[RMDB]
RNA sequence: GGGAACGACUCGAGUAGAGUCGAAAAACACCAAAACUGAAAACGGAAGGCAAUCCUUCCACGACGAUACUUACUUUCCUUUGAUCGUCGUUACUACUGGCAUAGCCACAAAGGAGAACAAAUAUGAGCGCGGACACUGACUUCGGUCAGUGUCCAAGGUAUAAUCAGUGUUCGCACUGAUUAUACCAAAAGAAACAACAACAACAAC
Reactivity to 2A3 in 0.01 (KOAc 150mM, MgCl2 10mM, bicine 150mM(pH8.5), 24C), signal-to-noise 9, nucleotides 027 to 156: a000c070a090c020c050a060a070a040a070c170u230g080a090a100a040a050c070g010g000a000a000g020g020c150a050a200u260c000c000u000u020c000c000a000c000g000a000c000g000a000u100a170c030u060u030a030c020u050u170u040c010c000u050u020u030g020a010u010c000g000u000c000g000u030u050a030c040u030a030c010u010g010g000c050a230u100a130g020c000c010a040c050a030a040a020g040g010a030g020a080a020c060a070a130a030u260a110u240g080a070g110c110g000c060g060g000a000c000a000c000u000g000a000c000u030u060c160g040g000u000c010a000g000u000g000u000c000c000a000a000
Reactivity to DMS in 0.01 (KOAc 150mM, MgCl2 10mM, bicine 150mM(pH8.5), 24C), signal-to-noise 2, nucleotides 027 to 156: a130c030a190c030c040a070a040a070a280c090u000g000a130a070a070a040c060g040g030a050a040g030g040c120a130a180u020c010c010u000u000c030c010a110c030g020a060c020g030a010u000a030c060u010u010a030c170u000u010u040c030c020u050u000u020g000a040u000c000g000u000c010g020u030u000a020c030u000a080c070u010g000g000c060a200u000a140g050c060c020a050c080a030a060a070g030g000a120g010a080a230c060a020a080a090u000a080u000g000a120g010c070g010c170g010g000a020c000a000c000u000g000a040c000u000u000c220g050g010u000c000a010g000u000g000u020c000c000a000a030